[RMDB]
RNA sequence: GGGAACGACUCGAGUAGAGUCGAAAAUGGCUUGGCGACGCACGAGACCUCGGGCGGGGAGGAGACGGAGCCCACGGAGGGCAGAGGCCCUGGUGACUGUGUGUCAUCCGUGCAGGCCGUGGAGGGCCAAUCGGCGUGAUUUCGAUCACGCCGAUUGAAAAGAAACAACAACAACAAC
Reactivity to DMS in 0.01 (KOAc 150mM, MgCl2 10mM, bicine 150mM(pH8.5), 24C), signal-to-noise 3, nucleotides 027 to 126: u020g000g040c030u000u000g010g020c070g030a130c100g020c070a060c060g020a150g000a130c120c060u010c080g010g010g010c080g000g000g010g000a100g020g010a090g010a060c110g010g010a150g000c070c040c010a060c050g010g000a090g000g000g010c030a120g010a170g010g010c020c010c020u010g010g030u000g000a060c010u010g030u010g020u010g010u000c000a030u000c030c040g000u000g010c050a150g000g000c020c020g020u020g000g010a120g010g000g000c090
Reactivity to 2A3 in 0.01 (KOAc 150mM, MgCl2 10mM, bicine 150mM(pH8.5), 24C), signal-to-noise 1, nucleotides 027 to 126: u080g020g050c040u010u080g020g040c070g060a060c050g080c050a030c030g050a000g050a080c020c060u040c080g020g000g020c060g010g070g000g000a080g010g020a040g010a020c050g040g010a010g030c000c000c000a010c010g060g070a070g000g020g000c030a040g030a050g260g000c000c000c030u040g040g010u040g020a030c030u060g060u100g030u080g000u300c010a020u000c000c010g010u030g050c070a030g000g080c010c010g000u020g000g060a110g000g060g000c000

Structure probing data (DMS and 2A3) for a 177-nucleotide construct. For DMS, 3,945 sequencing reads were counted. The RNA was probed in 150 mM KOAc, 10 mM MgCl2 and 150 mM bicine (pH 8.5) at 24 C.